[RMDB]
RNA sequence: GGGAACGACUCGAGUAGAGUCGAAAAUGUACACACUUUAAAAAAUGCCAUACACACACUAAGUAAAGACAUGACACAUUGGAGAGUAACUACACAUAUAUGUCAGUGUUGUAAUGUUAGAUUAGGUGGUUAGGAAAGAGGAUCCUCUGAGAAGAUAUAUUUACUCGGAGUUCGCUCCGAGUAAAUAAAAAGAAACAACAACAACAAC
Reactivity to 2A3 in 0.01 (KOAc 150mM, MgCl2 10mM, bicine 150mM(pH8.5), 24C), signal-to-noise 1, nucleotides 027 to 156: u080g020u060a000c020a020c000a000c060u220u100u170a130a220a050a010a000a010u160g000c010c000a020u070a050c020a000c000a000c000a020c100u080a130a030g050u040a180a020a000g050a020c020a010u100g000a020c000a000c000a080u020u040g050g000a070g030a020g120u100a160a030c010u110a060c080a010c000a020u130a060u060a060u260g070u090c020a020g020u010g040u110u020g000u060a120a020u030g050u080u010a020g000a110u040u080a030g000g050u060g050g000u000u020a050g010g050a060a070a000g010a010g030g040a020u070c020c020u000c030u020g050a010g000a040a030g050a070u060a000
Reactivity to DMS in 0.01 (KOAc 150mM, MgCl2 10mM, bicine 150mM(pH8.5), 24C), signal-to-noise 1, nucleotides 027 to 156: u000g010u000a060c050a090c000a050c080u000u000u010a000a040a120a130a080a040u000g010c020c010a130u000a040c060a080c000a030c030a050c040u000a040a030g000u010a110a020a220g010a020c030a020u100g000a070c000a020c050a100u000u000g040g010a190g020a120g020u000a090a170c100u000a080c050a020c090a070u000a080u000a060u040g020u010c000a050g030u010g010u000u020g000u000a050a050u010g000u000u010a050g030a090u040u010a040g000g020u000g010g000u000u000a050g020g000a060a020a060g000a110g000g000a140u000c010c000u000c030u000g000a210g020a040a030g030a090u000a140
Conditions: 150 mM KOAc, 10 mM MgCl2 and 150 mM bicine (pH 8.5), 24 C.
The record gives the reactivity of an RNA of 207 nucleotides to 2A3 and DMS.
2A3 adducts were read by reverse transcription with SuperScript II with manganese.
For DMS, 1,873 sequencing reads were counted.
Values are in units of 0.01, from 0 to 300, in steps of 10.